[RMDB]
RNA sequence: GGGAACGACUCGAGUAGAGUCGAAAAAGUUCUAGUCCUCACCUAAGAUCAGACUCACAAGGCCCUCAAAGGAAGAGCACUUGGUUGGGCUUUGUGGUGGGGAUCAGUGUCUCAUUUUUAGUCCCAAAUUAAAAACGAGAUUUUGGGCUGUACAUCAGACUGAUUUUAUAUUCGUAUAAAAUCAGUCAAAAGAAACAACAACAACAAC
Reactivity to 2A3 in 0.01 (KOAc 150mM, MgCl2 10mM, bicine 150mM(pH8.5), 24C), signal-to-noise 7, nucleotides 027 to 156: a000g050u090u040c010u020a010g010u010c000c000u010c010a000c000c020u100a120a040g030a090u100c070a060g100a140c050u030c060a010c000a000a000g020g000c000c010c000u040c060a080a080a010g050g020a050a070g050a030g090c050a020c070u020u040g040g040u110u060g000g000g000c000u010u000u010g010u000g000g000u010g000g010g010g000a010u060c030a020g040u020g050u050c010u000c040a080u060u100u070u070u220a040g070u150c010c010c000a020a020a010u070u070a050a050a040a020a030c110g040a080g000a150u040u030u040u040g000g000g000c010u030g040u090a090c060a100u120c030a050
Reactivity to DMS in 0.01 (KOAc 150mM, MgCl2 10mM, bicine 150mM(pH8.5), 24C), signal-to-noise 4, nucleotides 027 to 156: a090g010u010u010c010u000a070g020u000c000c010u000c020a100c030c050u010a070a100g010a120u000c070a220g010a150c140u000c030a220c040a010a040g010g000c000c010c000u010c040a060a070a080g030g020a130a160g010a220g020c100a100c030u000u000g020g030u030u000g010g020g000c020u000u000u000g040u000g010g030u000g020g000g010g010a020u000c020a050g020u010g000u000c010u000c010a050u010u000u000u010u000a050g020u000c020c090c080a070a070a100u000u010a000a000a020a020a040c010g000a040g010a160u010u010u000u000g000g020g030c060u000g030u010a060c080a160u000c060a300

Source: RMDB library OK3TST, as collected in RNAgym. The record gives the reactivity of an RNA of 207 nucleotides to 2A3 and DMS. For 2A3, 8,295 sequencing reads were counted. The reactions ran in a buffer of 150 mM KOAc, 10 mM MgCl2 and 150 mM bicine (pH 8.5), at 24 C.